[RMDB]
RNA sequence: GGGAACGACUCGAGUAGAGUCGAAAAGCAAAUACCUUCGGGUAUUUGCAAAAAGUUUACCACUGACCGAUAUGUGGUAUAUAAUUGGUCGGGUUGAUCAAAAAAGGUGGGGCUUCGGCCCCACCAAGCUAUUAUAAUUGUUCGCAAUUAUAAUAGCAAAAGAAACAACAACAACAAC
Reactivity to DMS in 0.01 (KOAc 150mM, MgCl2 10mM, bicine 150mM(pH8.5), 24C), signal-to-noise 1, nucleotides 027 to 126: g020c000a030a020a020u000a000c000c000u000u030c220g020g000g020u000a000u000u010u020g010c020a000a030a080a160a080g000u000u010u000a020c000c000a030c000u000g000a200c030c020g010a070u000a030u000g000u000g000g010u000a020u010a050u000a080a130u000u000g010g010u000c020g020g020g000u040u000g000a020u010c030a010a050a100a130a080a130g000g020u000g000g010g030g000c000u010u020c200g020g000c000c030c020c010a000c000c010a010a060
This 177-nucleotide RNA was probed chemically with DMS.
Source: RMDB library M2PK50, as collected in RNAgym.
The reactions ran in a buffer of 150 mM KOAc, 10 mM MgCl2 and 150 mM bicine (pH 8.5), at 24 C.
Reactivities are rounded to 0.1 and cut off at 0 and 3.